[RMDB]
RNA sequence: GGGAACGACUCGAGUAGAGUCGAAAAACAAUCUGGUUCGCCAGAUUGUCAAUGUCUUCCUAAAAUCCUUGGAAGACUGUAUAUAUAGAAUAAAGGACGAAAGUACCUGUGCUUUCGAGCACAGGAAACAUGUAACGCGAUUCGUCGCGUUACAUGUAAAAGAAACAACAACAACAAC
Reactivity to DMS in 0.01 (KOAc 150mM, MgCl2 10mM, bicine 150mM(pH8.5), 24C), signal-to-noise 2, nucleotides 027 to 126: a000c000a020a000u000c000u000g010g030u000u010c130g030c000c000a010g000a000u000u000g010u020c070a040a070u010g000u000c020u000u010c000c000u010a020a010a010a120u020c000c000u000u000g010g010a030a020g010a020c020u030g010u000a040u020a070u020a200u020a110g010a150a110u030a070a110a070g010g040a180c140g000a030a080a030g010u010a100c020c000u010g030u000g010c000u010u000u010c160g020a010g020c000a000c000a020g000g000a050a050
Reactivity to 2A3 in 0.01 (KOAc 150mM, MgCl2 10mM, bicine 150mM(pH8.5), 24C), signal-to-noise 1, nucleotides 027 to 126: a000c000a000a000u000c010u010g010g010u020u010c080g080c060c000a000g000a010u000u030g000u000c010a000a050u090g010u000c000u000u010c000c000u020a020a010a020a160u080c010c000u000u000g000g010a000a000g010a000c000u020g010u000a260u010a020u000a000u040a150g050a130a040u170a240a200a020g010g000a000c040g150a150a130a000g090u070a100c000c000u010g000u000g040c000u020u060u160c300g040a010g000c000a010c000a000g030g000a020a000

Annotation: Structure probing data (DMS and 2A3) for a 177-nucleotide construct. 2A3 adducts were read by reverse transcription with SuperScript II with manganese. Reactivities are given for positions 27 through 126. DMS adducts were read by reverse transcription with MarathonRT. The reactions ran in a buffer of 150 mM KOAc, 10 mM MgCl2 and 150 mM bicine (pH 8.5), at 24 C.